Conditions: 150 mM KOAc, 10 mM MgCl2 and 150 mM bicine (pH 8.5), 24 C. This 177-nucleotide RNA was probed chemically with DMS and 2A3. For DMS, 4,893 sequencing reads were counted. Reactivities are given for positions 27 through 126. 2A3 adducts were read by reverse transcription with SuperScript II with manganese.
[RMDB]
RNA sequence: GGGAACGACUCGAGUAGAGUCGAAAAAUCAAGAUGCCUUUCACAAAGUCAUUAUUGCUGAAGAUGCCGUAAGUCACCGUGUGGUUGGCAUCAUGUGCCUUGAGGCGACCAUUGAAGAUCAGCAGAAGCUAAAUACCACUUUCGAGUGGUAUUUAGCAAAAGAAACAACAACAACAAC
Reactivity to DMS in 0.01 (KOAc 150mM, MgCl2 10mM, bicine 150mM(pH8.5), 24C), signal-to-noise 4, nucleotides 027 to 126: a060u000c020a070a100g010a020u000g000c030c010u000u000u000c110a030c080a080a130a090g010u000c080a060u000u000a060u010u000g000c010u000g000a120a110g020a090u010g010c020c020g000u000a030a050g010u000c100a020c030c210g010u000g020u000g010g000u000u000g010g000c000a010u000c020a040u010g010u010g020c040c020u000u000g010a140g010g020c040g000a060c060c030a070u010u010g010a110a150g010a070u000c030a050g020c060a060g000a110a140
Reactivity to 2A3 in 0.01 (KOAc 150mM, MgCl2 10mM, bicine 150mM(pH8.5), 24C), signal-to-noise 3, nucleotides 027 to 126: a000u080c030a020a020g010a010u020g030c000c010u010u040u030c050a030c000a030a090a020g030u010c020a040u010u110a040u070u060g030c010u060g070a150a040g050a120u120g010c000c030g060u050a020a020g060u050c040a030c050c100g080u060g010u030g090g000u010u040g010g000c010a000u010c000a000u020g020u010g000c000c000u060u150g080a090g010g020c030g030a040c020c020a020u030u130g070a100a030g040a150u060c020a020g090c000a020g030a120a010